[RMDB]
RNA sequence: GGGAACGACUCGAGUAGAGUCGAAAAGCAGUAUCUCGUUAGGCGAGGCUCCUAUACAAACACAGGUUGCUGAUCUGACGACGUCGAGAGUCGCCCAAGAUUAGGACAGGAUAUAUCGAACCAAGGUGAACCUGUCCAGGGUUCGCCCUGGACAGAAACUUUGAGCUGUGUUCGCACAGCUCAAAGUAAAAGAAACAACAACAACAAC
Reactivity to 2A3 in 0.01 (KOAc 150mM, MgCl2 10mM, bicine 150mM(pH8.5), 24C), signal-to-noise 1, nucleotides 027 to 156: g020c040a010g000u130a080u060c080u020c030g010u080u160a140g040g080c050g080a050g030g020c030u070c030c010u080a110u120a140c180a100a160a000c210a020c020a060g010g060u100u020g030c000u010g030a050u050c000u060g010a000c010g010a010c010g070u080c030g050a030g020a010g180u000c010g050c000c000c030a020a010g120a150u110u130a010g130g000a040c050a020g100g000a030u080a020u030a090u160c080g070a030a050c010c050a050a050g020g020u030g000a040a030c050c000u000g000u000c000c000a000g000g000g000u000u030c160g040c010c000c000u000g000g010a000c000a030g000a000a030

Source: RMDB library M2RFPK, as collected in RNAgym. Chemical mapping of a 207-nucleotide RNA with 2A3. The reactions ran in a buffer of 150 mM KOAc, 10 mM MgCl2 and 150 mM bicine (pH 8.5), at 24 C. For 2A3 the reverse transcriptase was SuperScript II with manganese. Values are in units of 0.01, from 0 to 300, in steps of 10.